Background: Conditions: 150 mM KOAc, 10 mM MgCl2 and 150 mM bicine (pH 8.5), 24 C. An RNA of 207 nucleotides, treated with 2A3 and DMS and read out base by base. 2A3 adducts were read by reverse transcription with SuperScript II with manganese. The DMS profile rests on 3,864 reads. Reactivities are given for positions 27 through 156. The data come from the RNA Mapping Database (RMDB), library OK3TST.
[RMDB]
RNA sequence: GGGAACGACUCGAGUAGAGUCGAAAACAUACUUACCUUGGAUUAACUAACUUAAUUCUCACAAGACCUUUAUAAUGAGGUCAGCACUGUGAAUAGCACCAUUUUGAAGAUUAAGGAAACUGAGGCAUGAUAUCACAGAUAGGUAAGUGGCCUCCAAGCAUAGGGUAAUAUUCGUAUUACCCUAUGCAAAAGAAACAACAACAACAAC
Reactivity to 2A3 in 0.01 (KOAc 150mM, MgCl2 10mM, bicine 150mM(pH8.5), 24C), signal-to-noise 6, nucleotides 027 to 156: c020a040u150a040c000u020u020a010c000c000u020u060g030g010a030u060u020a050a060c110u030a050a010c000u040u020a020a010u100u000c060u030c030a050c030a140a060g000a010c000c010u060u070u070a290u150a230a140u300g010a000g000g020u000c000a000g000c050a000c010u020g010u010g060a070a040u060a060g020c020a030c050c050a060u070u070u050u180g150a100a070g030a100u090u110a080a060g080g010a090a070a030c070u070g030a030g040g000c020a020u090g020a060u080a010u080c010a010c000a030g050a080u070a020g030g000u000a020a000g010u000g020g020c000c000u000c040c020a060a030
Reactivity to DMS in 0.01 (KOAc 150mM, MgCl2 10mM, bicine 150mM(pH8.5), 24C), signal-to-noise 2, nucleotides 027 to 156: c070a200u000a060c030u000u010a020c030c010u000u010g010g020a070u010u000a050a130c060u000a100a170c140u010u000a030a050u000u000c000u010c040a050c090a140a270g000a030c000c000u000u010u000a120u030a170a140u010g010a030g020g020u020c020a140g040c090a220c030u000g000u020g020a070a100u010a050g000c000a050c020c010a280u000u000u000u000g030a080a140g030a190u000u010a060a120g010g000a050a080a130c090u000g020a040g030g000c010a050u010g000a110u010a050u020c020a030c020a070g000a180u020a000g020g050u000a000a080g010u000g000g030c020c000u000c000c040a020a300